Source: RMDB library OK2TRN, as collected in RNAgym. The record gives the reactivity of an RNA of 177 nucleotides to DMS. The reactions ran in a buffer of 150 mM KOAc, 10 mM MgCl2 and 150 mM bicine (pH 8.5), at 24 C.
[RMDB]
RNA sequence: GGGAACGACUCGAGUAGAGUCGAAAAGAGAGUCUGUGCGGCCCAAGAAGAUCAACAACAUCACAGUCUCCUUUGAAGGAAACCCAUCUGGCAGCAAAACCCCCAUCACCACCAAGCUGACUGUGAGUGAUUCCCAAGUAUUCGUACUUGGGAAUCAAAAAGAAACAACAACAACAAC
Reactivity to DMS in 0.01 (KOAc 150mM, MgCl2 10mM, bicine 150mM(pH8.5), 24C), signal-to-noise 3, nucleotides 027 to 126: g000a160g020a020g020u000c020u000g000u000g000c080g030g000c020c010c040a050a110g010a090a100g020a110u000c060a090a060c140a050a080c080a140u000c020a020c040a010g020u000c020u000c040c000u030u010u020g020a140a130g020g000a050a090a110c020c010c010a120u000c060u000g010g000c020a040g010c070a060a060a120a160c030c000c040c010c020a070u010c040a060c030c050a040c160c050a030a070g020c070u000g010a040c020u010g020u000g020a100g000